Annotation: The record gives the reactivity of an RNA of 207 nucleotides to DMS and 2A3. As a SHAPE reagent, 2A3 marks flexible, mostly unpaired nucleotides at the ribose 2'-OH.
[RMDB]
RNA sequence: GGGAACGACUCGAGUAGAGUCGAAAAAAUUUCGAAUCGUUAAGUGCGGAACUUCUCAGUACACAUCAAACCAUCGACAAAUAUGGUGCAGCCAUUAUGCAUUUAUCUGGUGUCAUCGAUUCUCCACCUUGGCUUGUGUAUGCUUGUAUCUGUGCUAAUUGGCCUUUAAUUUCGAUUAAAGGCCAAUAAAAGAAACAACAACAACAAC
Reactivity to DMS in 0.01 (KOAc 150mM, MgCl2 10mM, bicine 150mM(pH8.5), 24C), signal-to-noise 3, nucleotides 027 to 156: a050a040u000u000u000c010g010a020a010u000c050g010u000u010a110a090g020u000g000c030g000g010a050a050c050u010u000c000u000c030a150g000u020a040c030a040c040a070u000c060a100a060a030c010c000a040u010c060g010a120c110a040a050a060u010a030u000g010g020u000g020c070a060g020c070c160a020u020u000a160u000g010c040a050u000u000u010a020u020c040u000g050g030u000g020u000c060a070u000c060g010a110u000u000c040u000c020c060a040c020c020u000u000g020g000c030u000u000g040u000g020u020a020u000g000c050u000u000g010u000a080u010c040u020g020u000g000c060u010a060
Reactivity to 2A3 in 0.01 (KOAc 150mM, MgCl2 10mM, bicine 150mM(pH8.5), 24C), signal-to-noise 2, nucleotides 027 to 156: a000a000u160u170u140c090g040a080a050u140c110g060u150u140a160a020g040u050g080c010g000g020a020a030c010u110u050c020u010c090a020g000u040a010c040a010c000a030u100c090a010a160a000c000c000a050u070c090g090a050c050a110a070a030u150a010u060g000g000u050g000c030a010g010c010c020a000u120u140a070u240g040c040a020u120u050u150a140u090c110u060g010g020u010g030u000c010a060u050c020g080a130u050u040c040u030c030c010a030c010c000u110u050g020g050c000u030u030g010u000g000u020a000u070g050c140u030u060g020u010a120u030c010u000g040u000g040c000u000a050

Reactivities are given for positions 27 through 156.
The 2A3 profile rests on 662 reads.